[RMDB]
Chemical mapping of a 177-nucleotide RNA with 2A3 and DMS.
RNA sequence: GGGAACGACUCGAGUAGAGUCGAAAAAGGGCUCCUUAUUCAAAGAUGGAAAUAUCUGGCUAAUUUUCCUUGUUUUACAAAAUCAUAUAUAGUCUAGGGUCAAGUUUGUUCACAUCUUGGACUGUACAUGAGUGUAUGAUUUCGAUCAUACACUCAUAAAAGAAACAACAACAACAAC
Reactivity to 2A3 in 0.01 (KOAc 150mM, MgCl2 10mM, bicine 150mM(pH8.5), 24C), signal-to-noise 2, nucleotides 027 to 126: a010g110g010g010c030u040c010c010u030u150a130u120u120c080a100a040a080g050a050u090g030g060a060a040a040u100a020u010c050u060g030g040c010u050a060a170u030u090u000u040c010c000u050u050g050u050u110u020u030a050c020a000a140a050a090u140c030a050u130a030u050a010u010a300g010u000c010u010a000g030g000g000u020c020a040a040g070u080u210u070g130u160u150c090a040c010a060u000c000u000u000g010g000a000c010u010g040u040a050c030
Reactivity to DMS in 0.01 (KOAc 150mM, MgCl2 10mM, bicine 150mM(pH8.5), 24C), signal-to-noise 5, nucleotides 027 to 126: a090g000g010g020c030u000c030c030u000u010a070u020u010c090a110a070a110g010a070u000g010g000a110a080a070u010a040u010c030u010g010g010c060u030a100a070u010u000u000u000c010c020u000u000g010u000u000u000u020a110c110a070a060a080a090u010c040a060u000a170u000a030u000a030g020u000c000u000a020g010g010g000u000c110a060a090g010u000u010u010g000u010u000c090a110c190a020u000c010u000u000g010g010a030c010u000g020u000a040c240

About this RNA: For DMS the reverse transcriptase was MarathonRT.